[RMDB]
Structure probing data (2A3 and DMS) for a 177-nucleotide construct. The data come from the RNA Mapping Database (RMDB), libraries RFM100 and RFMREP. DMS adducts were read by reverse transcription with MarathonRT. For 2A3 the reverse transcriptase was SuperScript II with manganese.

RNA sequence: GGGAACGACUCGAGUAGAGUCGAAAAAUGGCCCCGUAACUUCGGGAGAAGGGGUGCCCCCGCGUACGUGAACCGGCUCGCCCGGGGAGCGGAGGGGGGCCGCAGUGAAGAGGCCCAAGCGACUGUUACUACAUAAGAAAUUCGUUUCUUAUGUAGUAAAAGAAACAACAACAACAAC
Reactivity to 2A3 in 0.01 (KOAc 150mM, MgCl2 10mM, bicine 150mM(pH8.5), 24C), signal-to-noise 9, nucleotides 027 to 126: a010u100g130g000c010c000c000c000g010u030a030a040c030u040u090c140g100g020g010a040g030a040a020g010g010g010g020u090g010c000c000c000c000c000g060c030g040u100a030c000g010u030g020a030a010c000c000g010g000c080u160c190g100c060c000c000g000g010g000g020a000g000c010g000g000a080g010g000g000g000g000g000c000c000g000c020a040g020u080g110a120a050g030a070g090g030c000c010c000a020a020g070c040g080a060c020u030g010u050u000
Reactivity to DMS in 0.01 (KOAc 150mM, MgCl2 10mM, bicine 150mM(pH8.5), 24C), signal-to-noise 7, nucleotides 027 to 126: a080u020g010g010c020c000c000c020g010u000a150a150c030u000u020c130g030g030g020a090g020a070a110g000g000g000g020u010g020c000c000c000c000c000g030c210g020u000a110c000g000u000g010a300a290c010c010g010g000c040u050c300g010c190c000c000g000g000g000g010a300g000c000g000g000a180g010g000g020g020g010g020c020c080g000c070a040g000u010g010a110a220g000a080g010g020c010c010c070a050a100g000c080g000a180c040u000g000u000u010